[RMDB]
This 177-nucleotide RNA was probed chemically with 2A3 and DMS. It was measured as part of the RMDB library OK2TRN. Reactivities are rounded to 0.1 and cut off at 0 and 3. Conditions: 150 mM KOAc, 10 mM MgCl2 and 150 mM bicine (pH 8.5), 24 C. The DMS profile rests on 1,190 reads. Values cover nucleotides 27 to 126.

RNA sequence: GGGAACGACUCGAGUAGAGUCGAAAAGCAGACCACAUAUGUGGUCGAUGCCAUGGAGGCCCAUCAGUUUAUCAAGGCUCCUGGCAUCACUACUGCUAUUGAGCAGGCUGCUCUAGCAGCGGCCAACUGUCCGAUAUCGAUUCGUCGAUAUCGGACAAAAAGAAACAACAACAACAAC
Reactivity to 2A3 in 0.01 (KOAc 150mM, MgCl2 10mM, bicine 150mM(pH8.5), 24C), signal-to-noise 2, nucleotides 027 to 126: g010c010a000g020a040c050c040a020c050a080u300a120u300g000u000g000g010u000c040g000a010u010g010c020c000a080u120g010g010a060g140g130c030c040c000a070u200c070a090g090u170u120u190a150u170c060a090a000g020g000c000u000c010c000u000g000g000c000a010u020c000a010c030u220a030c020u010g020c010u000a070u080u240g090a090g000c110a010g090g070c010u070g000c000u010c000u040a100g000c030a000g000c040g070g000c020c000a020a030c050
Reactivity to DMS in 0.01 (KOAc 150mM, MgCl2 10mM, bicine 150mM(pH8.5), 24C), signal-to-noise 2, nucleotides 027 to 126: g000c060a080g000a060c000c000a000c000a300u010a110u010g010u000g000g000u000c070g020a040u010g040c000c020a010u040g010g000a070g030g010c010c000c060a110u030c300a080g000u000u090u000a070u000c110a130a220g000g010c000u000c000c000u020g000g000c000a000u000c010a070c210u020a090c040u000g030c010u000a120u030u000g000a080g010c080a040g010g020c110u010g000c010u000c060u040a080g000c130a000g020c000g000g000c010c020a100a060c110